[RMDB]
RNA sequence: GGGAACGACUCGAGUAGAGUCGAAAACAGUGCUUCGGCACUGAAAAAGCGUACUACCGAUAGACAUGUCGGGAGGACUACCCACCGCAUCCCAAAUAGGAUGCGAGGUCUGACCGACAACAGCUAUCGGUAUCGCAAAAACCUGGUUCGCCAGGAACAUACAUUACGCUUUCGAGCGUAAUGUAUGAAAAGAAACAACAACAACAAC
Reactivity to 2A3 in 0.01 (KOAc 150mM, MgCl2 10mM, bicine 150mM(pH8.5), 24C), signal-to-noise 6, nucleotides 027 to 156: c010a000g010u010g020c000u080u160c260g150g000c010a000c010u000g050a090a020a000a010a000g030c030g030u100a090c050u010a000c030c000g000a000u010a000g080a100c050a090u060g000u000c000g010g020g000a010g000g000a000c000u070a070c040c060c070a030c000c010g010c000a000u020c010c030c050a190a300a070u280a110g000g000a000u000g010c000g000a010g000g000u000c010u030g020a030c000c000g000a000c000a000a010c010a020g030c000u000a000u000c000g000g000u000a000u000c000g000c000a080a010a000a010a060c010c010u020g030g040u070u070c290g040c050c000a000g000g010a000a010
Reactivity to DMS in 0.01 (KOAc 150mM, MgCl2 10mM, bicine 150mM(pH8.5), 24C), signal-to-noise 4, nucleotides 027 to 156: c000a030g020u000g000c000u000u010c300g070g030c000a020c000u010g000a000a050a110a090a120g020c020g010u000a100c150u010a010c000c000g010a030u000a010g040a050c090a300u000g020u010c000g000g000g000a300g010g010a030c010u010a030c010c010c020a300c110c000g000c000a010u000c000c000c020a050a190a210u020a050g020g010a020u000g000c000g000a020g010g010u000c010u010g010a300c000c000g030a030c000a030a040c110a190g000c010u000a010u000c000g020g010u010a010u000c010g000c030a050a070a030a030a120c010c010u000g010g030u000u020c240g060c020c020a030g000g000a160a170